[RMDB]
RNA sequence: GGGAACGACUCGAGUAGAGUCGAAAAACAGUACCAGCUGCUACGGCAGCUGGUACUGAACUUUCAUCGAGUUAAGAAACCACGUAAACAAAGCGGAACCGAAAAGCUAAACGAGUAGGAAGAAUAAAUAGGUACCACCACUUCGGUGGUGGUACAACAUGAUAGAUGAGUUCGCUCAUCUAUCAUGAAAAGAAACAACAACAACAAC
Reactivity to 2A3 in 0.01 (KOAc 150mM, MgCl2 10mM, bicine 150mM(pH8.5), 24C), signal-to-noise 5, nucleotides 027 to 156: a000c000a000g010u000a000c030c000a020g010c000u020g010c010u040a030c210g190g000c000a000g020c000u000g000g000u010a000c000u000g000a000a000c000u010u030u020c020a040u030c010g000a000g000u020u050a170a100g070a140a150a030c020c010a040c080g070u180a120a100a070c070a100a140a000g000c020g020g030a080a160c000c000g000a000a000a000a000g020c070u230a240a070a020c000g000a000g010u010a010g090g020a040a030g060a080a070u250a110a070a050u150a080g100g000u000a000c010c000a000c000c000a010c010u040u060c180g040g000u000g000g010u000g000g010u000a000c000a000a000
Reactivity to DMS in 0.01 (KOAc 150mM, MgCl2 10mM, bicine 150mM(pH8.5), 24C), signal-to-noise 2, nucleotides 027 to 156: a100c010a060g030u010a010c030c020a050g040c000u000g060c010u000a100c280g060g000c010a010g010c010u000g010g000u000a010c000u000g000a030a080c010u000u010u010c100a080u000c070g010a050g020u000u000a120a160g000a200a190a210c010c050a100c080g030u020a100a110a120c140a070a050a170g030c070g020g020a100a150c050c070g000a030a060a090a090g020c030u000a030a100a080c050g030a070g000u010a100g010g030a090a070g020a110a100u010a040a050a180u000a090g010g010u000a010c020c000a000c000c040a010c000u000u000c290g030g020u010g010g040u000g000g040u010a000c010a010a060